[RMDB]
RNA sequence: GGGAACGACUCGAGUAGAGUCGAAAAAGAUGUUCAGCAGGGAUUCUAGCAGCAUCGUAAAAUAAUCGUGAUUCUUCUUUCUUAUUUGCCUUGAUUAUUUUAGAAGAGCCAGACCAUUGGCCUGAUAACUCCCUGGAGUAUUCGUACUCCAGGGAGUAAAAGAAACAACAACAACAAC
Reactivity to 2A3 in 0.01 (KOAc 150mM, MgCl2 10mM, bicine 150mM(pH8.5), 24C), signal-to-noise 4, nucleotides 027 to 126: a000g050a020u070g000u050u050c050a040g010c020a050g080g060g070a210u180u070c010u040a040g000c010a000g020c000a020u030c060g040u080a000a000a030a070u120a010a040u080c060g030u040g100a160u020u080c010u080u040c010u070u110u000c030u120u110a140u180u080u130g050c020c020u080u040g030a080u070u160a080u010u050u060u050a070g020a180a000g030a030g020c000c000a020g040a150c020c020a050u060u030g050g000c000c000u010g050a040u020a160
Reactivity to DMS in 0.01 (KOAc 150mM, MgCl2 10mM, bicine 150mM(pH8.5), 24C), signal-to-noise 2, nucleotides 027 to 126: a060g030a060u000g010u010u000c080a090g020c010a040g020g010g010a100u020u000c020u000a130g040c000a130g000c070a040u030c040g030u030a030a020a050a030u010a030a020u020c040g000u020g030a120u010u000c010u000u000c000u000u000u000c020u020u000a150u010u010u010g030c020c020u000u000g000a030u010u020a050u000u000u000u000a050g000a090a020g020a120g020c010c030a000g020a150c060c070a100u010u000g000g000c030c020u000g000a100u060a080